[RMDB]
RNA sequence: GGGAACGACUCGAGUAGAGUCGAAAAACGACGCCGUCGGUGCCCUGCGUGACGUCGUGCAAAACCAUCUGCUGCAGGUGCUGGCGCUGGUGACGAUGGAACCGCCGGUCGGUUCCAGCGCCGAUGAGGCCAGUGUAAGUUUCGACUUACACUGGCCAAAAGAAACAACAACAACAAC
Reactivity to DMS in 0.01 (KOAc 150mM, MgCl2 10mM, bicine 150mM(pH8.5), 24C), signal-to-noise 1, nucleotides 027 to 126: a080c030g000a050c050g000c020c010g010u000c070g050g000u010g020c100c030c040u010g010c070g000u020g020a080c030g000u000c020g020u010g010c130a070a060a050a140c060c030a080u000c070u000g020c050u000g000c030a060g010g000u000g020c050u000g000g000c030g010c010u000g000g000u000g040a050c050g000a030u000g010g000a060a050c070c040g000c070c100g000g000u030c000g000g000u000u000c010c000a040g000c000g030c010c000g010a060u000g000a150
Reactivity to 2A3 in 0.01 (KOAc 150mM, MgCl2 10mM, bicine 150mM(pH8.5), 24C), signal-to-noise 1, nucleotides 027 to 126: a000c050g030a000c020g010c050c000g070u050c030g000g040u060g030c020c050c000u060g000c020g050u100g020a040c000g010u040c000g030u000g000c070a000a010a080a080c010c030a060u080c110u270g080c020u030g010c030a020g010g060u110g100c070u060g000g000c050g000c000u000g000g080u060g050a050c010g000a030u070g020g000a060a120c040c000g000c040c050g200g030u120c040g000g030u070u000c000c000a000g000c010g000c030c010g020a110u060g090a010